[RMDB]
RNA sequence: GGGAACGACUCGAGUAGAGUCGAAAAUUCCGGUUCCGUGUAACCGCAACCUUUAUUGCGUACUUCUGCUUACGAUGUUGGCCGCACACCUAUGCAUACAUAUCAGAUAGAGGAUGUAAGUCAAACAUUUAUUAUCGUAAAUCGGGAAAUCAUCCGAAGGCUAAUACCACUUCGGUGGUAUUAGCCUAAAAGAAACAACAACAACAAC
Reactivity to 2A3 in 0.01 (KOAc 150mM, MgCl2 10mM, bicine 150mM(pH8.5), 24C), signal-to-noise 1, nucleotides 027 to 156: u000u000c010c030g020g060u010u020c070c060g060u020g060u080a030a030c000c000g090c050a070a040c010c030u270u260u060a270u120u070g030c060g040u050a150c060u090u050c070u090g000c000u070u110a040c040g080a050u020g020u030u010g060g000c000c000g100c000a010c000a000c100c010u120a080u090g110c000a040u000a050c000a040u190a090u280c010a010g030a120u050a030g030a000g080g020a010u050g000u030a100a020g080u090c000a040a000a160c000a000u060u100u260a090u040u020a100u100c000g010u030a000a130a100u060c020g000g040g000a050a100a120u040c020a040u020c000c080g000a020